[RMDB]
RNA sequence: GGGAACGACUCGAGUAGAGUCGAAAACUUUUAUUUUCUUCUCGGUUCAAUAAAGAAAUGACUGGUGUCAAGGUAUGAGUGUGUGACGGGGGUCUUGAUAAAUAGGAUCUUUUAGCGAGGUGAUAAGCCAUGCUGCUAGUUUCGACUAGCAGCAUGGAAAAGAAACAACAACAACAAC
Reactivity to 2A3 in 0.01 (KOAc 150mM, MgCl2 10mM, bicine 150mM(pH8.5), 24C), signal-to-noise 2, nucleotides 027 to 126: c000u150u090u070u090a150u060u160u050u000c010u140u030c010u010c020g040g000u050u100c050a060a020u120a170a050a020g160a030a050a090u140g080a040c040u010g060g020u090g000u010c020a020a070g070g000u070a090u210g020a090g070u050g000u030g040u110g050a040c030g000g000g000g000g000u030c040u030u080g030a030u060a080a140a050u150a000g030g000a020u020c020u020u070u060u000a030g050c010g010a010g010g010u020g020a030u040a140a110g050
Reactivity to DMS in 0.01 (KOAc 150mM, MgCl2 10mM, bicine 150mM(pH8.5), 24C), signal-to-noise 1, nucleotides 027 to 126: c020u010u000u060u020a080u000u010u020u000c020u000u000c020u000c040g020g010u000u000c030a070a110u010a080a060a120g000a020a080a080u010g000a030c050u030g000g020u060g000u000c020a020a050g000g000u020a050u000g020a130g040u030g030u010g020u020g020a040c060g000g010g030g000g000u020c020u010u000g000a160u030a000a060a110u040a060g000g000a000u000c010u000u030u010u010a110g010c000g000a020g000g000u000g000a050u080a000a050g010